[RMDB]
RNA sequence: GGGAACGACUCGAGUAGAGUCGAAAACGUACGUGGAGACACGUACGACGAGACUUCGGUCUCGAAUCGCGCGAACUGGUGCCGCGCGCGCGCGAGGCGUCGGUGGUCGGCGAGCCCACGGACGCAAAAACUCGCGCGUAAAUAAUUCGCAUUAGAAAAUCAUACGACGAUUCGUCGUCGUAUGAUUAAAAGAAACAACAACAACAAC
Reactivity to DMS in 0.01 (KOAc 150mM, MgCl2 10mM, bicine 150mM(pH8.5), 24C), signal-to-noise 1, nucleotides 027 to 156: c040g000u010a000c000g060u020g030g050a300g000a300c000a000c030g000u000a020c000g010a130c040g000a140g000a020c010u000u000c260g080g060u000c010u000c000g000a030a020u010c020g020c000g000c070g010a070a100c100u000g060g000u000g000c040c010g020c020g040c070g020c000g010c000g010c000g000a020g040g030c030g000u000c000g040g030u000g000g010u010c040g000g040c090g000a300g040c180c010c010a020c000g000g010a060c000g020c080a070a040a040a100a120c040u020c010g000c030g020c000g020u000a020a060a070u000a050a130u010u000c100g040c000a080u000u000a090g010a130a040
Reactivity to 2A3 in 0.01 (KOAc 150mM, MgCl2 10mM, bicine 150mM(pH8.5), 24C), signal-to-noise 2, nucleotides 027 to 156: c020g000u030a000c000g000u000g010g020a040g010a040c000a000c000g000u000a000c000g000a030c000g000a000g000a000c020u090u140c300g090g000u010c010u000c020g010a060a060u120c020g000c000g000c000g030a160a170c010u010g010g020u010g010c000c000g010c000g000c000g010c000g000c000g000c000g040a010g020g000c000g000u000c080g150g000u010g000g000u020c030g030g120c160g050a020g000c000c000c000a010c020g100g000a000c000g000c000a030a070a050a070a090c000u010c000g000c000g000c000g000u010a000a000a000u110a000a030u090u150c070g000c010a000u000u040a030g000a050a110